[RMDB]
Source: RMDB library TTRDEL, as collected in RNAgym.
An RNA of 177 nucleotides, treated with DMS and read out base by base.
RNA sequence: GGGAACGACUCGAGUAGAGUCGAAAAGAUAUGGAGCGUUAAGGCGACGAUCUUUCGACCCAUCGGAAACGAUGGGUGGGGAGCCUUUACGCUCCUAAGUCAAAAGGGACGGCUUCGGCCGUCCCAAGGAGCUAAAAUAGUUCGCUAUUUUAGCUCCAAAAGAAACAACAACAACAAC
Reactivity to DMS in 0.01 (KOAc 150mM, MgCl2 10mM, bicine 150mM(pH8.5), 24C), signal-to-noise 2, nucleotides 027 to 126: g000a010u000a100u010g000g000a040g010c000g000u000u000a020a020g010g020c000g030a200c300g000a090u020c120u010u010u000c010g000a040c000c010c010a000u000c000g020g010a030a040a060c010g010a010u000g010g000g030u010g010g000g010g000a060g020c000c000u000u000u000a010c000g020c000u010c000c010u000a000a040g000u000c010a080a090a140a110g000g010g010a040c000g000g010c000u010u020c230g020g040c010c000g000u000c000c000c010a010a020
The DMS profile rests on 2,174 reads.